[RMDB]
RNA sequence: GGGAACGACUCGAGUAGAGUCGAAAACCCACCAAGUUCUUAUCAAGAGAAGCAGAGGGACUGUCCCGACGAAGCUUCAGCAACCGGUGUAAUGGCGAAAGCCAUGACCAAGGUGCUAAAUGUAGCAAGCUCGAACAGCUUGGAAGAUAAGAACAGACUGGUAUGAAAAUUUCGAUUUUCAUACCAGAAAAGAAACAACAACAACAAC
Reactivity to DMS in 0.01 (KOAc 150mM, MgCl2 10mM, bicine 150mM(pH8.5), 24C), signal-to-noise 1, nucleotides 027 to 156: c000c000c000a190c140c070a060a220g050u000u000c010u020u000a060u000c000a070a160g000a280g020a080a030g020c070a140g000a220g030g000g020a160c200u020g010u000c030c010c000g000a100c120g010a220a130g020c040u000u000c020a040g020c050a010a020c000c000g020g050u000g000u010a040a020u000g020g020c010g000a200a060a300g010c000c000a000u000g000a060c030c020a190a060g000g000u000g000c000u020a030a110a160u010g000u000a050g020c000a050a150g000c020u000c020g000a150a160c120a090g020c020u000u000g000g040a090a150g010a100u010a030a080g000a030a010c000a150g030a190
Reactivity to 2A3 in 0.01 (KOAc 150mM, MgCl2 10mM, bicine 150mM(pH8.5), 24C), signal-to-noise 3, nucleotides 027 to 156: c010c000c010a010c030c040a130a040g010u010u000c000u000u010a020u000c040a120a030g040a000g000a160a000g000c020a000g030a060g070g010g030a080c150u200g190u130c010c010c000g090a130c030g040a100a010g000c000u010u000c010a000g000c000a030a080c000c020g000g020u070g130u230a060a030u000g000g000c020g070a100a000a000g000c000c000a000u010g010a000c030c000a050a110g000g000u000g000c010u020a060a100a100u190g040u050a030g110c000a000a000g010c010u060c120g110a130a080c050a060g000c000u010u000g020g050a050a060g000a000u000a000a000g000a000a000c000a000g000a020